[RMDB]
RNA sequence: GGGAACGACUCGAGUAGAGUCGAAAAGACCCUUUAUGGAACUGUCAUUCAACCCCAAAAAUCUAGUGCAAAUAUUGUCUUUAUUACUUAGGCUAAAAGAAAUAAGUAUUAAAGCGGGACAAGGCAUAACAGCAGCUACGCUUCGGCGUAGCUGCAACGAGUAACCUUAGUUCGCUAAGGUUACUCGAAAAGAAACAACAACAACAAC
Reactivity to 2A3 in 0.01 (KOAc 150mM, MgCl2 10mM, bicine 150mM(pH8.5), 24C), signal-to-noise 1, nucleotides 027 to 156: g050a010c020c010c000u000u260u050a200u230g010g000a010a050c080u050g010u020c000a070u110u130c090a140a130c000c000c000c060a000a140a140a000a070u070c040u170a020g010u030g050c040a170a120a000u070a070u140u020g060u010c000u040u030u010a060u010u020a020c000u040u030a000g110g010c010u210a200a020a050a100g050a000a060a000u060a020a010g000u000a000u020u000a030a000a020g000c050g010g000g030a040c020a090a060g080g030c060a070u090a200a050c030a060g000c000a000g010c000u010a000c000g040c080u040u160c280g040g000c000g040u000a010g000c000u000g000c000a000a000
About this RNA:
This 207-nucleotide RNA was probed chemically with 2A3. For 2A3, 536 sequencing reads were counted. The RNA was probed in 150 mM KOAc, 10 mM MgCl2 and 150 mM bicine (pH 8.5) at 24 C. Source: RMDB library M2RFPK, as collected in RNAgym.